RNA sequence: GGGAACGACUCGAGUAGAGUCGAAAAACGUACCUAUUCGUAGGUACGUGAUUAAAAGCUAGACAUAUAAAAGGAAGACUAGCAAUAUAGAAUCCUAUAUUAAUAGCACAUGUUUCGACAUGUGCAACUAUGCUUGAAUGUUCGCAUUCAAGCAUAGAAAAGAAACAACAACAACAAC
Reactivity to DMS in 0.01 (KOAc 150mM, MgCl2 10mM, bicine 150mM(pH8.5), 24C), signal-to-noise 4, nucleotides 027 to 126: a010c000g000u010a000c010c000u000a020u000u020c190g020u000a010g010g010u000a000c000g000u000g010a070u010u010a060a060a160a110g010c010u000a000g030a100c100a160u020a140u010a080a050a120a070g010g010a160a160g010a150c010u000a010g010c010a060a090u000a060u000a040g000a090a140u000c040c000u000a030u000a110u010u000a090a120u000a150g010c000a020c000a000u000g000u000u000u020c160g010a030c000a010u010g010u010g000c000a030a050
Reactivity to 2A3 in 0.01 (KOAc 150mM, MgCl2 10mM, bicine 150mM(pH8.5), 24C), signal-to-noise 5, nucleotides 027 to 126: a010c000g000u010a000c000c010u010a030u030u090c240g060u030a000g000g000u010a000c000g000u000g000a000u010u110a020a070a020a010g000c000u000a010g070a060c030a070u300a020u100a180a190a050a020g120g040a100a110g040a080c010u000a000g000c010a050a020u110a010u010a020g120a060a060u020c000c020u040a060u020a030u270u210a130a150u090a130g000c000a000c000a010u000g000u020u100u090c140g060a000c000a000u000g000u000g000c000a000a000
Overview:
The record gives the reactivity of an RNA of 177 nucleotides to DMS and 2A3. 2A3 adducts were read by reverse transcription with SuperScript II with manganese.